[RMDB]
RNA sequence: GGGAACGACUCGAGUAGAGUCGAAAAGCCAGAAUCAGCAGCAGGCCGAUAAGCGCGUUGGGCCGCCACUGGUAGUCUUCAAAUAGUGUCGAAAUUGACAGCGCCACCAGCGGAAAGAGCAGCGUGGUAUACGCUGCCUGACUGGCACCGAUGCGACCAGUAUCACCUCCUUCGGGAGGUGAUACUGAAAAGAAACAACAACAACAAC
Reactivity to 2A3 in 0.01 (KOAc 150mM, MgCl2 10mM, bicine 150mM(pH8.5), 24C), signal-to-noise 2, nucleotides 027 to 156: g060c000c000a010g020a060a120u090c020a010g020c020a050g000c040a050g040g180c060c020g090a170u110a210a040g040c000g030c000g080u030u030g040g010g010c040c000g020c000c000a020c000u010g010g000u030a040g010u020c060u160u030c090a040a120a210u300a170g070u100g050u110c060g110a140a100a130u050u090g030a010c030a040g090c050g000c100c020a030c020c000a000g010c010g010g030a130a240a000g080a010g000c010a000g000c000g020u020g040g040u210a150u060a120c000g000c000u000g020c000c000u010g000a030c080u030g010g030c000a040c010c020g000a000u030g070c050g010a060c060
Reactivity to DMS in 0.01 (KOAc 150mM, MgCl2 10mM, bicine 150mM(pH8.5), 24C), signal-to-noise 1, nucleotides 027 to 156: g000c030c030a080g010a220a110u010c030a090g030c000a110g050c070a140g010g020c000c000g010a040u000a050a180g040c040g080c040g050u020u000g010g000g010c000c030g040c020c040a030c020u030g010g010u000a020g030u010c030u000u000c120a130a050a150u000a090g020u000g040u000c060g000a090a090a120u010u000g000a060c020a100g030c210g010c040c050a000c010c000a060g040c010g000g000a070a110a130g020a110g020c000a040g000c000g050u000g010g000u010a130u000a040c000g040c000u000g000c000c020u020g000a060c070u010g000g000c000a140c040c030g000a080u020g020c000g000a090c080
Source: RMDB library OK3TST, as collected in RNAgym. An RNA of 207 nucleotides, treated with 2A3 and DMS and read out base by base. Values are in units of 0.01, from 0 to 300, in steps of 10. The reactions ran in a buffer of 150 mM KOAc, 10 mM MgCl2 and 150 mM bicine (pH 8.5), at 24 C. For 2A3, 962 sequencing reads were counted.